The record gives the reactivity of an RNA of 207 nucleotides to DMS and 2A3.
For 2A3 the reverse transcriptase was SuperScript II with manganese.
Values cover nucleotides 27 to 156.
The RNA was probed in 150 mM KOAc, 10 mM MgCl2 and 150 mM bicine (pH 8.5) at 24 C.

[RMDB]
RNA sequence: GGGAACGACUCGAGUAGAGUCGAAAAUCAGAAUCAGGCCGGAGUGUUUAGCGCUCCGUAAACACGGUCGUACAUCCAGCCGGUAGCCUGGUUCCUUGCAUUGAGUGAUGUACGGAGUGUAUAGAGCAAAAGAAAGACCUGUUCGCAGGUCUUUCAAGACCACCAUAAUGUUCGCAUUAUGGUGGUCAAAAGAAACAACAACAACAAC
Reactivity to DMS in 0.01 (KOAc 150mM, MgCl2 10mM, bicine 150mM(pH8.5), 24C), signal-to-noise 1, nucleotides 027 to 156: u010c040a010g010a070a030u000c010a010g010g010c030c030g020g000a120g120u020g000u000u000u010a230g010c030g000c000u000c000c000g000u030a000a130a160c070a060c000g020g000u000c040g000u000a020c030a040u000c020c010a170g000c070c070g000g060u000a040g010c030c020u000g000g030u000u000c000c040u000u000g020c130a210u000u000g000a140g000u010g020a050u010g050u000a010c000g040g000a130g030u010g000u000a110u000a080g010a110g040c060a090a080a150a170g000a010a010a030g010a040c000c000u020g010u010u010c290g030c030a000g000g010u000c010u000u000u000c010a030a120
Reactivity to 2A3 in 0.01 (KOAc 150mM, MgCl2 10mM, bicine 150mM(pH8.5), 24C), signal-to-noise 3, nucleotides 027 to 156: u060c010a000g010a010a010u000c000a000g010g020c020c010g020g000a020g020u140g020u110u140u210a150g100c000g010c000u000c010c000g000u020a010a030a000c150a000c080g030g070u050c000g010u020a000c000a060u000c030c040a030g020c010c010g020g010u030a000g010c000c000u000g000g000u010u000c020c010u080u140g040c010a170u040u170g030a030g100u090g010a010u020g000u000a020c030g020g030a070g090u080g010u050a090u110a170g100a030g070c070a090a020a060a040g000a000a000a010g000a000c000c000u000g040u050u040c150g010c050a000g000g000u000c000u000u000u000c000a000a000